[RMDB]
RNA sequence: GGGAACGACUCGAGUAGAGUCGAAAAGAUAUGGAUCGUAAGGCCUUGGAUUUAAUAUUUCUCAAAUCUACAUCGGAAACGAUGUAGAUUUGACUAAUAUUUGUCAGGCUAAUUACGAUCCUAAGUCCCUACUAAUAAAGUUCGCUUUAUUAGUAGGAAAAGAAACAACAACAACAAC
Reactivity to 2A3 in 0.01 (KOAc 150mM, MgCl2 10mM, bicine 150mM(pH8.5), 24C), signal-to-noise 4, nucleotides 027 to 126: g090a020u140a060u270g000g000a000u010c010g010u010a010a030g070g000c020c050u160u300g270g030a030u190u300u190a010a030u010a010u010u020u030c020u000c000a020a010a000u000c000u010a000c000a010u010c010g000g030a060a090a070c010g000a000u020g000u000a000g000a000u000u000u000g000a000c000u010a000a010u000a020u010u020u030g010u010c010a000g020g000c000u020a050a010u040u010a000c000g000a000u000c000c000u000a030a020g010u000c010
Reactivity to DMS in 0.01 (KOAc 150mM, MgCl2 10mM, bicine 150mM(pH8.5), 24C), signal-to-noise 4, nucleotides 027 to 126: g010a120u000a270u010g000g000a010u000c000g010u000a010a040g010g010c000c000u000u010g030g010a020u000u000u000a010a010u000a010u000u000u010c090u000c000a000a010a010u000c000u000a010c000a010u010c000g000g010a190a110a300c000g010a020u000g010u000a000g000a000u000u000u000g000a010c040u000a020a000u000a010u010u000u000g000u000c000a040g000g010c000u000a070a110u000u000a010c000g000a000u000c000c010u000a020a130g010u000c030